[RMDB]
RNA sequence: GGGAACGACUCGAGUAGAGUCGAAAAGUUCAUCCCCUGAUCAAGGAUGCCCGAAACGGUGAGGCGGAAAGCAAAUUAAAUAACCUCAACCCAUCGGGACGGUUGGCCAGUUAAGAAGUGAGGAUUCAAAAGAUCGAACCGUUCGCGGUUCGAUCAACUUAGGAAGCAGGUUCGCCUGCUUCCUAAGAAAAGAAACAACAACAACAAC
Reactivity to 2A3 in 0.01 (KOAc 150mM, MgCl2 10mM, bicine 150mM(pH8.5), 24C), signal-to-noise 1, nucleotides 027 to 156: g070u010u060c050a080u040c010c000c000c040u030g050a080u080c090a030a110g070g010a020u060g000c040c050c000g000a080a030a000c050g000g030u000g030a020g000g000c030g100g060a300a000a010g090c100a150a030a110u190u110a090a100a000u170a130a000c000c000u000c030a040a050c070c020c000a050u010c000g000g030g020a000c020g030g020u000u070g020g060c000c000a000g010u000u140a090a070g140a130a020g050u070g100a050g110g040a040u120u130c020a030a120a000a030g030a000u000c000g010a000a010c010c000g050u070u020c160g070c010g130g000u020u000c000g000a000u000c000a000a000
Annotation:
Structure probing data (2A3) for a 207-nucleotide construct. The reactions ran in a buffer of 150 mM KOAc, 10 mM MgCl2 and 150 mM bicine (pH 8.5), at 24 C. The data come from the RNA Mapping Database (RMDB), library M2RFPK. 2A3 is a SHAPE reagent: it acylates the 2'-hydroxyl of flexible nucleotides of all four kinds.